[RMDB]
RNA sequence: GGGAACGACUCGAGUAGAGUCGAAAAGAUAUGGAUUGUCUACAGAUGCGAAGAACUCGGAAACGAGGGAGCAUUUGUAGAGCAAUCCUAAGUCAAACAUCAGAGUUGGUUCGCCAACUCUGAUGAAGAAUCAACUGGUGUUCGCACCAGUUGAUUCAAAAGAAACAACAACAACAAC
Reactivity to 2A3 in 0.01 (KOAc 150mM, MgCl2 10mM, bicine 150mM(pH8.5), 24C), signal-to-noise 1, nucleotides 027 to 126: g050a060u060a070u130g010g000a000u000u000g020u050c000u020a010c010a010g010a030u010g060c010g140a300a010g040a100a020c010u000c010g010g050a110a040a050c010g020a010g040g000g010a010g000c000a000u000u000u000g030u000a010g000a010g020c000a000a000u000c010c000u010a040a010g030u020c020a090a030a020c000a000u010c000a010g000a000g040u000u030g090g000u060u120c290g040c110c000a000a000c050u000c000u020g000a000u020g000a000a000
Reactivity to DMS in 0.01 (KOAc 150mM, MgCl2 10mM, bicine 150mM(pH8.5), 24C), signal-to-noise 1, nucleotides 027 to 126: g000a030u010a300u020g000g000a010u010u000g000u000c000u000a000c020a020g020a010u000g020c000g000a140a130g000a060a140c010u000c010g010g000a140a080a250c000g000a030g000g000g020a100g000c000a000u000u000u000g010u000a030g010a070g000c030a000a000u010c000c000u000a010a040g020u000c060a150a080a290c000a020u010c000a000g010a010g040u000u000g000g000u000u020c230g010c010c000a000a000c000u000c000u000g020a000u000g020a080a100
Chemical mapping of a 177-nucleotide RNA with 2A3 and DMS.
The reactions ran in a buffer of 150 mM KOAc, 10 mM MgCl2 and 150 mM bicine (pH 8.5), at 24 C.
The DMS profile rests on 979 reads.